Source: RMDB library M2PK50, as collected in RNAgym. Chemical mapping of a 177-nucleotide RNA with 2A3 and DMS. For DMS the reverse transcriptase was MarathonRT. 2A3 adducts were read by reverse transcription with SuperScript II with manganese. Values cover nucleotides 27 to 126. Conditions: 150 mM KOAc, 10 mM MgCl2 and 150 mM bicine (pH 8.5), 24 C.

[RMDB]
RNA sequence: GGGAACGACUCGAGUAGAGUCGAAAAUUUACGGUAUUCGUACCGUAAACGAGCAAGCAAGCAGCGCAAGGAGACAAGACGAUAAUAAGAUCGAGCAUGCUGAUAGUAGGAUCUUCGGAUCCUACAAGAUCAGAUGGAUAUUCGUAUCCAUCUGAUCAAAAGAAACAACAACAACAAC
Reactivity to 2A3 in 0.01 (KOAc 150mM, MgCl2 10mM, bicine 150mM(pH8.5), 24C), signal-to-noise 8, nucleotides 027 to 126: u010u000u010a000c000g010g000u010a020u010u100c180g030u030a040c000c000g000u000a000a000a000c030g020a030g060c040a090a000g030c010a050a010g010c030a020g010c020g010c050a040a060g090g020a060g040a030c050a060a030g050a040c030g030a030u050a140a060u130a160a110g090a120u050c030g010a020g020c040a030u090g010c020u060g040a070u060a110g000u000a000g000g000a000u000c000u020u040c170g070g000a000u000c000c000u000a000c000a000a000
Reactivity to DMS in 0.01 (KOAc 150mM, MgCl2 10mM, bicine 150mM(pH8.5), 24C), signal-to-noise 8, nucleotides 027 to 126: u000u000u000a010c000g010g010u000a010u000u010c220g020u000a010c000c000g020u000a000a000a030c100g010a130g010c070a040a100g020c070a090a050g010c030a060g010c070g010c070a060a080g010g000a100g010a060c050a060a060g010a090c050g010a040u000a070a090u000a080a110g010a050u000c040g010a120g010c060a070u010g010c040u000g000a090u000a100g010u000a000g000g000a010u000c000u000u010c180g020g010a010u000c000c000u000a000c010a040a090